RNA sequence: GGGAACGACUCGAGUAGAGUCGAAAAAUUUGCAGACCGCAACGAAAUAGGGGUGGGAAACAACUUCGCCAUGGAGAUCAACCUCAGUGCCAACCUGUGGAGGAACUUCCUCUACUCCAACGUGGCCCUGUACCUGCCAGACAAGCUUAAGUACAACCACAAGGAUUAAGUUCGCUUAAUCCUUGUGAAAAGAAACAACAACAACAAC
Reactivity to 2A3 in 0.01 (KOAc 150mM, MgCl2 10mM, bicine 150mM(pH8.5), 24C), signal-to-noise 6, nucleotides 027 to 156: a000u080u110u120g010c030a040g030a110c020c040g000c040a040a020c040g090a070a060a090u200a130g000g000g020g000u050g020g010g010a030a060a040c040a040a040c040u060u050c050g010c070c030a060u080g020g000a070g010a050u080c030a030a070c010c020u070c040a030g030u030g090c020c010a050a060c050c040u080g010u040g010g010a010g000g040a050a110c040u110u050c010c010u040c020u030a020c010u000c020c030a050a080c050g010u030g030g010c010c010c000u000g000u010a030c010c000u010g010c020c020a070g020a120c060a050a030g030c010u090u070a070a010g040u060a050c040a060a040c050
Reactivity to DMS in 0.01 (KOAc 150mM, MgCl2 10mM, bicine 150mM(pH8.5), 24C), signal-to-noise 2, nucleotides 027 to 156: a140u000u000u000g000c000a100g040a130c010c040g000c050a040a140c060g010a040a070a150u010a090g020g020g020g030u000g010g010g000a090a040a090c040a070a050c100u000u000c040g020c010c050a070u000g000g000a070g000a120u010c050a060a040c050c050u010c070a090g030u000g010c010c050a060a110c070c020u000g020u000g020g020a040g000g000a050a120c100u010u000c040c000u000c010u000a040c010u000c040c020a040a130c090g030u000g010g010c000c040c040u000g000u000a050c070c030u020g000c010c030a070g000a090c070a060a070g000c030u000u000a050a070g000u000a050c050a060a160c070